[RMDB]
RNA sequence: GGGAACGACUCGAGUAGAGUCGAAAACGGAGCGGUCGGGCACCCGACUCCUCAGCCGGCGGCCCUGGGCGCGGCUGGCGUGGUGGCCAAGACCGAGGCGGCUGCUGGAGUGGUUGGCGGGGUCGGCCUGUAUGGGAACAUUCGUGUUCCCAUACAGAAAAGAAACAACAACAACAAC
Reactivity to 2A3 in 0.01 (KOAc 150mM, MgCl2 10mM, bicine 150mM(pH8.5), 24C), signal-to-noise 5, nucleotides 027 to 126: c030g030g030a050g090c060g030g040u060c020g020g030g030c090a120c030c000c010g030a040c010u040c000c020u040c020a080g040c010c000g070g080c010g010g010c000c010c020u130g110g060g000c080g010c010g040g020c020u010g030g000c040g010u130g080g100u130g080g030c010c010a040a030g030a100c030c020g000a030g060g040c080g020g000c000u020g000c000u030g010g030a040g030u070g020g040u140u050g030g000c020g000g000g000g020u030c020g000g020c010
Reactivity to DMS in 0.01 (KOAc 150mM, MgCl2 10mM, bicine 150mM(pH8.5), 24C), signal-to-noise 3, nucleotides 027 to 126: c060g010g000a080g000c110g000g000u010c020g030g010g020c080a160c070c010c020g010a050c030u000c060c060u010c050a090g000c000c030g000g000c000g000g010c040c010c060u000g010g010g000c020g000c300g000g000c010u000g000g020c020g000u010g020g010u000g010g000c000c000a080a300g000a110c000c000g010a060g000g020c040g010g020c020u000g000c020u000g000g000a090g010u010g000g000u010u010g010g020c030g000g000g000g000u000c030g010g000c090